[RMDB]
RNA sequence: GGGAACGACUCGAGUAGAGUCGAAAAUGUGGGGACUUCGGUCCCCACAAUAACGUGGAGCGGUUGGCCUCGUAAAAAGCCGCAAACUACGAAAGUAGAAAACACACGUCGAGUUCGCUCGACGUAACGUCAAAUGUCAAUUCGUUGACAUUUGACGAAAAGAAACAACAACAACAAC
Reactivity to 2A3 in 0.01 (KOAc 150mM, MgCl2 10mM, bicine 150mM(pH8.5), 24C), signal-to-noise 1, nucleotides 027 to 126: u070g030u000g000g000g000g000a000c010u010u040c290g110g000u000c000c000c000c000a000c000a000a000u010a000a000c010g040u110g040g070a190g030c010g010g010u050u060g060g130c070c000u120c030g020u020a080a050a000a000a010g000c000c000g000c020a050a030a010c020u020a000c010g070a080a020a000g010u050a020g060a100a070a040a000c090a020c010a010c030g000u000c000g000a000g000u010u090c190g030c100u040c030g000a010c000g000u000a030a000
Reactivity to DMS in 0.01 (KOAc 150mM, MgCl2 10mM, bicine 150mM(pH8.5), 24C), signal-to-noise 2, nucleotides 027 to 126: u020g020u000g000g000g000g010a020c000u000u000c240g020g030u000c000c000c010c000a000c000a030a020u010a070a210c050g020u010g030g000a130g020c020g000g000u000u000g000g010c010c010u000c090g000u030a010a030a050a050a070g010c000c000g010c020a100a060a130c010u000a000c020g010a120a070a180g030u000a020g000a060a070a060a090c220a070c150a020c020g010u000c000g000a000g000u000u000c190g000c000u000c010g000a010c010g000u000a020a040
This 177-nucleotide RNA was probed chemically with 2A3 and DMS. Conditions: 150 mM KOAc, 10 mM MgCl2 and 150 mM bicine (pH 8.5), 24 C. For DMS, 1,850 sequencing reads were counted. For 2A3 the reverse transcriptase was SuperScript II with manganese. For DMS the reverse transcriptase was MarathonRT. Values cover nucleotides 27 to 126. The 2A3 profile rests on 1,775 reads. The data come from the RNA Mapping Database (RMDB), library M2PK50.